The record gives the reactivity of an RNA of 177 nucleotides to 2A3. The reactions ran in a buffer of 150 mM KOAc, 10 mM MgCl2 and 150 mM bicine (pH 8.5), at 24 C. 2A3 adducts were read by reverse transcription with SuperScript II with manganese. Reactivities are given for positions 27 through 126.

RNA sequence: GGGAACGACUCGAGUAGAGUCGAAAAGAAAGAAAGAACGGUGCUGUGAUGAUGCCUUAAAAUUGUGGUUUCAACUCACUGAGAGUAAAUGAAGACUUACAAUUCCUUGGCUGUGUCUGAGCACCAAGGUGACCAGAACAUUCGUGUUCUGGUCACCAAAAGAAACAACAACAACAAC
Reactivity to 2A3 in 0.01 (KOAc 150mM, MgCl2 10mM, bicine 150mM(pH8.5), 24C), signal-to-noise 3, nucleotides 027 to 126: g060a000a040a000g160a060a110a000g070a030a010c040g010g010u000g000c000u000g010u060g090a010u030g000a000u110g000c000c000u070u050a020a180a030a010u000u000g010u000g040g000u020u010u000c000a020a000c000u000c020a130c210u230g090a030g000a000g270u080a080a050a140u050g030a070a020g130a050c020u110u130a030c170a000a000u010u040c000c020u060u010g000g000c000u030g060u030g020u300c000u040g180a000g000c000a000c010c000a000a000